The record gives the reactivity of an RNA of 177 nucleotides to DMS. DMS adducts were read by reverse transcription with MarathonRT. The RNA was probed in 150 mM KOAc, 10 mM MgCl2 and 150 mM bicine (pH 8.5) at 24 C.
RNA sequence: GGGAACGACUCGAGUAGAGUCGAAAAGAUAUGGACCUAGACUGUUACCGAGCAAUGGGAGGCUUAGCCAUCGGAAACGAUGGUGGGAGCUCAUUGCGUUUGACGUAACAGUCUAGGUCCUAAGUCAUCUAGAUAGCAUGUUCGCAUGCUAUCUAGAAAAAGAAACAACAACAACAAC
Reactivity to DMS in 0.01 (KOAc 150mM, MgCl2 10mM, bicine 150mM(pH8.5), 24C), signal-to-noise 4, nucleotides 027 to 126: g000a060u010a300u000g010g000a010c000c000u000a000g000a030c000u000g000u010u000a010c000c010g010a100g010c000a010a000u000g010g020g020a110g010g020c000u000u000a300g020c000c000a010u000c000g000g000a150a110a220c010g010a010u000g000g020u000g000g000g010a050g000c000u000c000a020u000u000g000c000g030u010u010u020g030a180c300g000u000a000a010c000a010g000u000c000u000a000g000g020u000c000c000u000a000a070g010u000c030a150